RNA sequence: GGGAACGACUCGAGUAGAGUCGAAAAGUCGGCCAAAUUUCCACACUAGUGCAUGACUUCACCUUUGCCAUUGUGUCUGAAGAUACAGAUGAGCCUCUCUCACGACAUUUUCCGGUGAUGAACGACGCGCCACAGGGUCAUUCGUGACCCUGUGGCGAAAAGAAACAACAACAACAAC
Reactivity to 2A3 in 0.01 (KOAc 150mM, MgCl2 10mM, bicine 150mM(pH8.5), 24C), signal-to-noise 2, nucleotides 027 to 126: g050u020c040g020g000c000c060a080a080a080u210u200u030c010c060a000c030a030c100u120a040g020u020g280c010a040u130g040a000c000u100u000c030a030c090c030u050u160u190g020c000c000a010u000u070g030u000g030u040c020u100g100a170a050g070a050u040a080c050a020g100a160u020g050a070g040c020c080u020c000u000c000u000c000a050c010g030a020c020a140u120u040u000u010c020c030g070g000u000g000a030u070g000a040a010c000g070a000c040g130